The record gives the reactivity of an RNA of 207 nucleotides to 2A3 and DMS. Reactivities are rounded to 0.1 and cut off at 0 and 3. The reactions ran in a buffer of 150 mM KOAc, 10 mM MgCl2 and 150 mM bicine (pH 8.5), at 24 C. It was measured as part of the RMDB library OK3TST. DMS adducts were read by reverse transcription with MarathonRT.
RNA sequence: GGGAACGACUCGAGUAGAGUCGAAAAAGGAUGUACCUCCUGCAGGCUCCCUAGCGUCUGGGGUCCACUGUGGGGCGGCCUGUGGCAGGCCCACCAGGAACCAUGCUUGCACAGGCAAAGCACCUUGCUUGUGGUUGUGUGGGGGGCUCCCUCAGGAGUACUGAGUAAUAUUCGUAUUACUCAGUACAAAAGAAACAACAACAACAAC
Reactivity to 2A3 in 0.01 (KOAc 150mM, MgCl2 10mM, bicine 150mM(pH8.5), 24C), signal-to-noise 1, nucleotides 027 to 156: a000g050g020a050u050g040u120a040c030c010u010c000c000u030g040c020a030g010g030c020u060c020c030c050u070a030g060c020g080u070c070u080g020g000g010g040u020c000c010a070c010u010g000u040g060g000g020g040c050g020g000c000c030u130g010u060g040g050c010a010g100g000c000c030c020a090c010c030a070g090g010a040a030c020c010a040u030g010c020u030u100g000c000a020c000a000g030g000c000a060a060a040g040c070a110c040c030u040u050g000c000u080u070g010u280g060g300u090u060g000u020g000u050g000g000g000g020g010g000c000u050c000c000c020u060c050a070g060g020a060
Reactivity to DMS in 0.01 (KOAc 150mM, MgCl2 10mM, bicine 150mM(pH8.5), 24C), signal-to-noise 1, nucleotides 027 to 156: a080g010g020a070u010g020u000a100c010c020u000c040c030u000g010c000a110g020g020c030u000c020c010c000u010a160g040c110g010u000c060u030g000g020g020g030u000c000c020a070c060u010g020u010g010g030g000g040c070g030g040c000c010u010g010u000g050g020c030a050g030g010c010c000c030a010c010c080a100g020g020a120a070c020c030a020u000g040c040u000u000g030c030a030c030a020g010g030c020a030a040a160g000c110a110c110c070u000u000g000c040u010u000g040u000g000g040u000u000g010u010g030u000g020g020g010g030g060g010c040u010c040c000c010u020c050a120g030g000a300